The record gives the reactivity of an RNA of 177 nucleotides to 2A3 and DMS. For 2A3 the reverse transcriptase was SuperScript II with manganese. For DMS the reverse transcriptase was MarathonRT. It was measured as part of the RMDB library TTRDEL.
[RMDB]
RNA sequence: GGGAACGACUCGAGUAGAGUCGAAAAGAUAUGGAUGUGGGACGUGGCAGGCGUUGAAAUCGGAAACGAUGGAGCCUGCACGUCAACCACAUCCUAAGUCAAAGAGUCUGUCUUCGGACAGACUCAACGUCUAUACACGGUUCGCCGUGUAUAGACGAAAAGAAACAACAACAACAAC
Reactivity to 2A3 in 0.01 (KOAc 150mM, MgCl2 10mM, bicine 150mM(pH8.5), 24C), signal-to-noise 3, nucleotides 027 to 126: g010a030u110a040u170g020g000a000u000g010u000g030g000g020a010c010g010u040g280g270c000a000g000g000c020g230u300u080g010a040a020a010u000c020g020g030a040a060a060c020g000a010u000g000g010a010g000c000c000u000g000c000a000c000g000u010c000a000a000c000c000a000c000a000u010c000c000u000a010a000g020u010c030a110a070a080g010a000g010u000c000u010g000u000c020u030u100c290g090g000a000c000a000g000a000c000u020c000a010a000
Reactivity to DMS in 0.01 (KOAc 150mM, MgCl2 10mM, bicine 150mM(pH8.5), 24C), signal-to-noise 3, nucleotides 027 to 126: g000a040u000a300u000g000g000a010u000g030u010g010g010g000a040c010g000u010g040g000c000a000g010g000c000g010u020u010g000a070a160a020u000c010g000g000a150a090a200c000g010a020u000g000g010a110g000c000c000u000g020c000a000c000g000u010c030a060a090c020c000a000c000a000u000c000c000u000a010a080g010u010c040a110a110a160g000a010g000u000c000u000g010u010c000u000u030c220g040g000a000c000a010g010a000c000u000c000a010a070